[RMDB]
RNA sequence: GGGAACGACUCGAGUAGAGUCGAAAAGAAUUGGUAUGUAAGCUACCGCUUCCGGUAGCUGCGUCACACUUUAAGAGUGUGCAUACUGAGCCGAAGCUCAGCUUCGGUCCCCCAAGGGAAGGUCAAACGUAUUAUACGGUUUCGACCGUAUAAUACGAAAAGAAACAACAACAACAAC
Reactivity to 2A3 in 0.01 (KOAc 150mM, MgCl2 10mM, bicine 150mM(pH8.5), 24C), signal-to-noise 9, nucleotides 027 to 126: g110a020a100u020u010g010g000u000a000u000g000u000a010a000g000c000u000a000c000c010g020c040u010u010c010c000g000g000u000a000g000c000u000g000c000g000u000c000a000c000a000c010u090u140u300a300a130g210a000g240u000g000u000g000c000a000u000a000c000u000g000a000g000c000c000g000a000a000g010c030u100c300a040g000c000u020u000c000g000g000u000c000c000c000c000c020a020a020g020g000g000a000a010g020g010u100c090a100a040a040
Reactivity to DMS in 0.01 (KOAc 150mM, MgCl2 10mM, bicine 150mM(pH8.5), 24C), signal-to-noise 8, nucleotides 027 to 126: g000a080a090u000u000g010g010u000a000u000g010u000a300a170g020c000u000a000c000c010g000c080u000u000c040c010g000g010u000a000g000c000u000g000c010g000u000c000a000c010a010c000u000u010u040a120a080g010a020g020u000g000u000g000c000a010u000a010c000u000g000a010g000c000c000g010a020a000g000c010u060c200a120g000c000u000u000c000g000g000u000c030c020c000c110c130a090a060g020g000g000a020a010g000g010u030c150a070a120a220
This 177-nucleotide RNA was probed chemically with 2A3 and DMS. For 2A3, 38,541 sequencing reads were counted. Source: RMDB library OK1LIB, as collected in RNAgym. DMS adducts were read by reverse transcription with MarathonRT.